[RMDB]
Structure probing data (2A3 and DMS) for a 177-nucleotide construct. For DMS the reverse transcriptase was MarathonRT. For DMS, 6,829 sequencing reads were counted. The RNA was probed in 150 mM KOAc, 10 mM MgCl2 and 150 mM bicine (pH 8.5) at 24 C. Source: RMDB library TTRDEL, as collected in RNAgym. Reactivities are given for positions 27 through 126.
RNA sequence: GGGAACGACUCGAGUAGAGUCGAAAAGAUAUGGAUAUAGGGAGCUAGUGUUCGGAAACGAACACAUAGCAUCGAUCUAUGAUCCUAAGUCAAAACAGCUAGCUAAUGUUCGCAUUAGCUAGCUGAACGUGUAAGUAGACUUCGGUCUACUUACACGAAAAGAAACAACAACAACAAC
Reactivity to 2A3 in 0.01 (KOAc 150mM, MgCl2 10mM, bicine 150mM(pH8.5), 24C), signal-to-noise 4, nucleotides 027 to 126: g020a000u060a020u100g000g000a000u000a000u000a020g030g030g020a040g020c010u000a000g000u010g010u020u000c000g020g010a070a060a050c010g000a000a000c020a010c030a060u010a000g010c030a070u300c010g000a010u020c010u010a030u090g210a030u080c000c000u020a090a040g060u030c050a020a020a110a200c000a030g010c010u010a010g000c010u000a000a000u010g030u080u130c270g000c180a000u000u010a000g000c010u000a000g010c000u000g000a010a010
Reactivity to DMS in 0.01 (KOAc 150mM, MgCl2 10mM, bicine 150mM(pH8.5), 24C), signal-to-noise 5, nucleotides 027 to 126: g010a040u000a300u000g010g000a000u000a030u010a010g000g000g000a030g020c000u000a010g010u000g000u010u000c000g010g000a080a060a170c010g020a000a010c000a010c000a040u000a000g020c010a270u000c160g020a060u010c000u010a010u000g010a020u000c000c000u000a030a110g000u010c030a060a090a110a230c000a000g000c000u000a000g010c010u000a000a010u000g010u000u010c240g020c010a010u000u000a000g000c000u000a000g000c010u000g000a010a060